[RMDB]
RNA sequence: GGGAACGACUCGAGUAGAGUCGAAAAAUAGAUGUGUUUUUGAGUAUCAGGCAGUUCUUCAAAGAGAAUGGACUCAUGGACCUCUAUGCUCUUUGUCAUCACUUGGUCCACAUAUGUUUCCACAAAAUUAGUUGUACCGGAAAGGCUGCCCAUGAGAUCAUAAGUGCCUUUUCGAAGGCACUUAUGAAAAAGAAACAACAACAACAAC
Reactivity to DMS in 0.01 (KOAc 150mM, MgCl2 10mM, bicine 150mM(pH8.5), 24C), signal-to-noise 1, nucleotides 027 to 156: a080u010a060g000a150u000g020u000g010u010u010u010u010u000g000a140g000u010a150u000c020a020g010g010c000a080g020u000u000c020u000u000c080a100a070a160g000a150g020a080a070u010g000g010a040c000u000c070a120u000g020g020a020c050c020u000c010u000a030u000g010c020u010c230u000u010u000g020u020c010a040u000c060a040c030u010u010g040g010u000c020c020a060c100a100u010a140u000g030u000u000u010c010c020a070c080a020a040a030a090u010u000a090g020u000u000g010u000a120c060c010g000g050a060a080a020g000g000c020u000g010c060c010c010a100u010g000a130g010a160
Reactivity to 2A3 in 0.01 (KOAc 150mM, MgCl2 10mM, bicine 150mM(pH8.5), 24C), signal-to-noise 2, nucleotides 027 to 156: a000u240a030g080a120u070g020u010g020u000u020u010u070u070g100a060g040u110a030u090c030a000g000g030c000a010g050u150u190c070u020u080c060a070a060a000g070a030g050a130a090u090g010g000a010c010u010c090a050u050g000g020a020c030c030u010c070u090a000u050g000c000u030c020u170u160u120g210u160c030a030u030c000a060c140u020u060g000g000u000c070c000a010c030a070u270a040u090g030u010u040u000c020c000a010c020a040a100a060a120u110u120a040g080u080u080g070u070a100c060c030g010g040a080a010a010g010g000c000u000g000c000c000c030a090u270g040a020g010a030
Chemical mapping of a 207-nucleotide RNA with DMS and 2A3.
Reactivities are given for positions 27 through 156.
Source: RMDB library OK3TST, as collected in RNAgym.
For DMS the reverse transcriptase was MarathonRT.
The RNA was probed in 150 mM KOAc, 10 mM MgCl2 and 150 mM bicine (pH 8.5) at 24 C.